This 177-nucleotide RNA was probed chemically with DMS and 2A3. The data come from the RNA Mapping Database (RMDB), library M2PK50. Reactivities are given for positions 27 through 126. The reactions ran in a buffer of 150 mM KOAc, 10 mM MgCl2 and 150 mM bicine (pH 8.5), at 24 C.
[RMDB]
RNA sequence: GGGAACGACUCGAGUAGAGUCGAAAAGCUAUACCGUUCGCGGUAUAGCAAAAUCUUUCCGAGAUGUACUAAUACGAGCCUUUUAGUCAACGGUUCGAGUCCAAACGGGUUACUUCGGUAACCCGAACAAUGAAUCUCACUUCGGUGAGAUUCAUUGAAAAGAAACAACAACAACAAC
Reactivity to DMS in 0.01 (KOAc 150mM, MgCl2 10mM, bicine 150mM(pH8.5), 24C), signal-to-noise 3, nucleotides 027 to 126: g020c010u000a010u000a010c000c010g020u010u000c220g020c000g010g000u000a010u010a020g020c000a010a030a070a070u000c110u000u000u000c000c010g010a220g010a120u000g000u010a030c050u000a080a050u010a290c070g010a040g010c070c030u000u000u000u010a140g000u020c210a050a060c130g000g030u000u000c010g000a080g010u000c080c060a020a100a240c000g000g010g000u000u000a000c010u000u000c160g010g010u000a000a000c000c000c000g010a020a040
Reactivity to 2A3 in 0.01 (KOAc 150mM, MgCl2 10mM, bicine 150mM(pH8.5), 24C), signal-to-noise 2, nucleotides 027 to 126: g010c000u000a000u010a020c000c000g000u000u060c260g000c010g070g000u000a000u010a010g000c000a000a000a000a000u000c000u030u010u060c020c030g060a060g030a150u070g040u150a070c030u140a080a170u150a180c040g030a020g090c020c000u110u040u070u150a150g150u200c100a090a010c070g020g000u000u000c010g000a000g040u000c040c020a060a090a060c020g010g030g000u000u000a010c000u030u090c220g020g000u010a010a000c000c010c000g000a000a000